[RMDB]
RNA sequence: GGGAACGACUCGAGUAGAGUCGAAAAUGUCUGUGUGCAACUACAAACAAUUGUGUAAAAAUUGUAAGGUGGAAAAUGGUAAGAGAUGCAGCUAGAGAGGUGUUUGGAGGCCAAGCUGUGGAGCCAACUCUUUAUUAGUCAUGCUAAAUAGCUUAGACCCUCACUAUCCGUUCGCGGAUAGUGAGGGAAAAGAAACAACAACAACAAC
Reactivity to 2A3 in 0.01 (KOAc 150mM, MgCl2 10mM, bicine 150mM(pH8.5), 24C), signal-to-noise 1, nucleotides 027 to 156: u040g040u000c040u030g040u030g010u080g060c010a060a050c050u050a080c020a090a180a000c020a000a100u050u100g080u080g040u170a090a010a080a100a000u030u010g020u040a060a040g040g000u010g000g120a030a020a080a030u110g010g000u060a090a000g000a020g010a090u090g030c020a020g000c000u130a000g000a000g000a020g010g000u020g050u060u110u070g030g030a000g000g030c000c000a010a010g010c050u000g000u040g070g000a010g010c000c000a120a100c030u090c030u060u150u000a200u090u050a090g010u070c020a000u010g050c000u090a140a090a140u010a140g030c000u140u080a140g080a100